The record gives the reactivity of an RNA of 207 nucleotides to 2A3. The 2A3 profile rests on 830 reads. It was measured as part of the RMDB library OK3TST. Reactivities are given for positions 27 through 156. 2A3 adducts were read by reverse transcription with SuperScript II with manganese. As a SHAPE reagent, 2A3 marks flexible, mostly unpaired nucleotides at the ribose 2'-OH.

RNA sequence: GGGAACGACUCGAGUAGAGUCGAAAACUGUCCUGUGUGGAAGUACCUGAGUACUUCACGCUCUACGGGAGUAGAGCCACACAGAUCGUGGAGCGAUGUCUUGGAACUACUCCCGUAGUUCACGUAUGACUCAGGUCAUACCAAGACGACAGCCACGGUAGUAGCUCCAGUUCGCUGGAGCUACUACAAAAGAAACAACAACAACAAC
Reactivity to 2A3 in 0.01 (KOAc 150mM, MgCl2 10mM, bicine 150mM(pH8.5), 24C), signal-to-noise 1, nucleotides 027 to 156: c010u030g000u000c000c000u010g030u030g000u010g010g010a090a030g010u120a030c000c000u020g020a020g010u130a300c070u110u130c110a160c210g130c020u060c000u000a000c000g000g010g030a000g000u000a000g000a010g000c010c000a000c000a000c000a000g000a030u000c000g080u230g160g060a130g150c000g010a000u000g000u010c000u000u000g010g000a030a050c000u000a000c010u010c030c020c020g010u000a000g000u110u150c060a080c100g110u200a050u060g000a000c000u010c010a000g000g000u000c000a000u000a030c030c000a000a000g000a010c000g010a000c000a000g020c000c000a040c030g030